RNA sequence: GGGAACGACUCGAGUAGAGUCGAAAAGGGGUCGAGGGAGGUCGAAUGGGACUGAUGACCUUGAAAUCUGGAUACCUAUGGCUGAAGCCUCCACGGCCAUAGGUAUCCAGAUUUCAAGCAAGGUCCCGAUCGACCAUCGAUCUCGACGGAGGCACCCGAGGAACUAAAGGUUCGCCUUUAGUUCCUCAAAAGAAACAACAACAACAAC
Reactivity to 2A3 in 0.01 (KOAc 150mM, MgCl2 10mM, bicine 150mM(pH8.5), 24C), signal-to-noise 1, nucleotides 027 to 156: g000g010g010g000u000c030g020a030g010g210g020a220g000g010u010c020g040a050a040u160g000g000g010a000c010u040g080a180u140g050a170c020c000u000u010g010a000a000a000u000c010u000g000g000a000u000a010c010c000u020a020u010g000g000c000u000g010a090a010g020c000c000u000c000c000a080c020g020g000c060c070a000u070a000g010g000u020a000u010c000c010a000g000a000u000u000u000c000a010a000g000c000a010a070g030g000u000c000c010c000g000a020u000c000g010a000c000c000a000u010c000g000a010u000c000u000c000g000a010c050g000g000a000g000g010c000a020c000c000c000